Conditions: 150 mM KOAc, 10 mM MgCl2 and 150 mM bicine (pH 8.5), 24 C. This 177-nucleotide RNA was probed chemically with 2A3 and DMS. It was measured as part of the RMDB library OK1LIB. For 2A3, 2,369 sequencing reads were counted.
RNA sequence: GGGAACGACUCGAGUAGAGUCGAAAAAGGAAGCCGCAGAGCCCCGGAUGGACACACCAGAAGACCAAGAUUUACCGCCCUGCCCAGAGGACAUCGCCAAGGAAAAACGCACUCCAGCACCUGAGCCGCACAUAUGCUAGUUCGCUAGCAUAUGUGCAAAAGAAACAACAACAACAAC
Reactivity to 2A3 in 0.01 (KOAc 150mM, MgCl2 10mM, bicine 150mM(pH8.5), 24C), signal-to-noise 3, nucleotides 027 to 126: a000g070g020a120a000g050c000c010g000c050a010g010a030g130c010c000c010c040g040g050a080u110g040g030a020c030a000c010a020c070c020a040g020a140a020g030a060c020c000a090a050g030a100u090u110u100a080c050c030g010c000c000c010u020g010c000c000c010a070g040a030g050g010a020c010a060u060c020g030c020c000a040a030g000g000a080a070a020a030a040c040g010c030a020c020u000c000c010a020g020c000a040c010c010u040g020a010g060c030c060
Reactivity to DMS in 0.01 (KOAc 150mM, MgCl2 10mM, bicine 150mM(pH8.5), 24C), signal-to-noise 2, nucleotides 027 to 126: a110g010g060a200a110g020c040c030g000c050a060g000a300g010c020c000c040c200g050g010a070u020g000g000a070c050a060c060a110c040c050a040g000a090a130g000a090c000c080a070a090g010a060u000u000u050a170c050c030g020c010c000c030u050g000c050c000c000a130g020a120g000g000a010c060a010u000c060g000c000c000a050a090g000g000a020a010a040a110a100c090g000c070a000c030u000c090c020a040g000c130a060c000c010u000g000a080g030c110c110